[RMDB]
RNA sequence: GGGAACGACUCGAGUAGAGUCGAAAAUUGUGCUCUUCCUGAUGAUUGAGUGUUCACCUGGAUUUUCUGACCACCUUCCCUUGUGCUAUUCUGUCAGCCUACAGAUUCUGGUACCUGGAUUUUUACCAUCAAAAGGUAAUUUCGAUUACCUUUUGAUAAAAGAAACAACAACAACAAC
Reactivity to DMS in 0.01 (KOAc 150mM, MgCl2 10mM, bicine 150mM(pH8.5), 24C), signal-to-noise 9, nucleotides 027 to 126: u010u010g020u010g010c040u000c050u000u000c020c020u010g010a090u010g000a090u010u000g000a090g020u010g010u000u010c040a070c040c030u000g010g000a100u000u010u000u000c040u000g010a130c060c040a050c060c050u000u000c030c010c010u010u010g020u010g010c050u010a070u010u000c030u010g000u000c060a070g010c040c020u000a090c070a060g000a110u000u010c060u000g000g010u010a050c060c050u000g000g000a060u000u010u010u010u010a110c120c060
Reactivity to 2A3 in 0.01 (KOAc 150mM, MgCl2 10mM, bicine 150mM(pH8.5), 24C), signal-to-noise 9, nucleotides 027 to 126: u070u050g040u050g020c010u010c000u060u040c010c030u060g040a070u060g010a030u070u140g030a050g050u080g050u050u050c030a050c070c020u040g050g040a100u070u030u050u040c040u060g060a070c010c010a040c020c010u030u030c010c000c000u030u040g040u020g020c010u030a050u100u040c010u020g070u040c020a020g040c000c010u030a040c020a020g040a060u070u030c010u070g020g010u020a050c000c010u030g060g020a070u040u020u020u030u130a070c020c010